RNA sequence: GGGAACGACUCGAGUAGAGUCGAAAAUGAGAUAGCUAAAUCACCUCGGUAUGAUUAGGGUGAGACCUAGGAACCGUAGGGGAAUUCUCAAAGGAAGCUUUUGCAGUGACGCCCAUGUAAGUGGGAUAAGAACCAACCCACUUCGGUGGGUUGGUAAACUAGCUGUAGAGUUCGCUCUACAGCUAGUAAAAGAAACAACAACAACAAC
Reactivity to DMS in 0.01 (KOAc 150mM, MgCl2 10mM, bicine 150mM(pH8.5), 24C), signal-to-noise 1, nucleotides 027 to 156: u010g040a120g000a050u010a040g020c100u000a040a130a110u000c010a080c010c000u000c040g010g000u000a070u010g040a260u010u000a100g000g000g030u000g000a230g010a230c010c040u000a080g010g000a130a140c020c020g000u000a020g000g020g010g020a070a160u000u010c030u020c020a090a140a130g010g050a110a100g010c070u000u000u000u010g030c050a090g010u000g040a130c020g000c010c010c020a050u000g020u020a100a170g030u010g010g010g010a060u000a040a120g010a140a060c000c000a000a030c000c000c000a020c020u010u000c240g040g050u000g000g010g020u010u010g010g000u010a000a020
Reactivity to 2A3 in 0.01 (KOAc 150mM, MgCl2 10mM, bicine 150mM(pH8.5), 24C), signal-to-noise 2, nucleotides 027 to 156: u060g000a010g020a030u100a060g020c130u130a030a110a100u060c040a030c030c000u020c000g020g010u150a100u180g110a170u090u010a000g000g000g000u060g140a070g040a120c000c000u000a040g000g030a040a010c010c040g060u170a060g040g010g000g010a000a100u130u040c020u000c040a050a040a000g060g060a080a020g020c050u110u060u170u220g050c080a060g010u010g070a030c080g010c000c000c000a010u060g080u170a040a170g020u030g020g010g010a040u040a090a050g080a000a000c010c000a000a000c000c000c020a020c010u030u040c080g010g010u000g000g000g000u000u000g000g000u000a000a000
The record gives the reactivity of an RNA of 207 nucleotides to DMS and 2A3. It was measured as part of the RMDB library M2RFPK. Reactivities are given for positions 27 through 156. The DMS profile rests on 2,438 reads.